An RNA of 177 nucleotides, treated with 2A3 and DMS and read out base by base. The reactions ran in a buffer of 150 mM KOAc, 10 mM MgCl2 and 150 mM bicine (pH 8.5), at 24 C. For 2A3, 2,916 sequencing reads were counted. It was measured as part of the RMDB library OK2TRN. The DMS profile rests on 1,830 reads.
[RMDB]
RNA sequence: GGGAACGACUCGAGUAGAGUCGAAAAGCACGAGUGAGCUUACACUCGUGUGAGCUCUGUUAGUGCAAACAGAGCUGAGUCUAGUGUAAGCUCUCUGGACUGACUAGUGUUUGCACUAACACUGGUAGGACAGCAUUCUAUUCGUAGAAUGCUGUCCAAAAGAAACAACAACAACAAC
Reactivity to 2A3 in 0.01 (KOAc 150mM, MgCl2 10mM, bicine 150mM(pH8.5), 24C), signal-to-noise 2, nucleotides 027 to 126: g010c010a010c030g010a000g010u030g020a030g070c070u130u130a050c010a020c000u020c040g000u010g030u020g000a020g030c010u020c000u020g010u000u000a020g030u000g060c030a000a000a000c010a010g080a000g000c040u050g090a020g010u010c010u000a000g000u000g000u000a090a210g020c040u060c000u000c000u010g010g040a040c010u030g020a010c000u050a070g240u010g010u040u000u010g000c000a010c020u010a010a000c000a010c030u070g040g090u120a120
Reactivity to DMS in 0.01 (KOAc 150mM, MgCl2 10mM, bicine 150mM(pH8.5), 24C), signal-to-noise 1, nucleotides 027 to 126: g020c030a040c070g010a030g010u000g000a120g000c100u020u000a080c020a010c000u000c120g030u000g010u000g040a070g000c000u000c010u000g010u000u000a010g030u000g000c040a020a030a010c020a010g000a000g000c000u000g020a020g030u000c030u000a030g010u000g000u010a070a180g000c180u000c030u000c010u000g000g000a070c060u000g000a040c010u010a070g020u000g030u010u000u000g010c030a010c020u000a010a000c020a020c030u010g000g010u000a100